This 177-nucleotide RNA was probed chemically with DMS and 2A3. The reactions ran in a buffer of 150 mM KOAc, 10 mM MgCl2 and 150 mM bicine (pH 8.5), at 24 C.
RNA sequence: GGGAACGACUCGAGUAGAGUCGAAAAUCAUACAAAAAUGUCUCAUAGUAGAAUCAUUUGUCAUGUGAGGUCGAAGGUCACAGACUGUGCAGCCCUAGAUCCAAUCUGAUACACAGUAACCUACAGCGAUAGUAACUCCUUUCGAGGAGUUAUUGUCAAAAGAAACAACAACAACAAC
Reactivity to DMS in 0.01 (KOAc 150mM, MgCl2 10mM, bicine 150mM(pH8.5), 24C), signal-to-noise 9, nucleotides 027 to 126: u000c040a050u000a050c020a000a020a040a030a050u000g010u000c010u000c010a160u000a150g010u010a020g000a060a050u010c090a130u000u000u000g010u000c130a030u000g010u000g000a130g010g010u000c030g010a110a200g010g010u000c030a040c050a080g010a080c110u000g010u000g000c110a070g010c030c020c030u000a190g000a040u000c030c050a050a020u000c030u000g000a080u000a070c090a050c050a030g000u000a060a080c040c020u000a050c130a080g010c180
Reactivity to 2A3 in 0.01 (KOAc 150mM, MgCl2 10mM, bicine 150mM(pH8.5), 24C), signal-to-noise 9, nucleotides 027 to 126: u040c000a000u030a050c010a000a060a020a010a010u090g010u000c000u000c020a170u150a050g130u050a010g020a040a030u060c010a020u020u010u040g010u010c020a010u050g020u010g030a040g010g000u010c010g020a020a010g010g000u020c000a010c000a020g200a120c120u060g020u010g000c020a020g030c000c000c000u000a010g000a010u000c010c000a020a000u000c010u020g020a010u050a050c070a000c000a030g020u020a030a020c000c000u030a020c020a030g040c020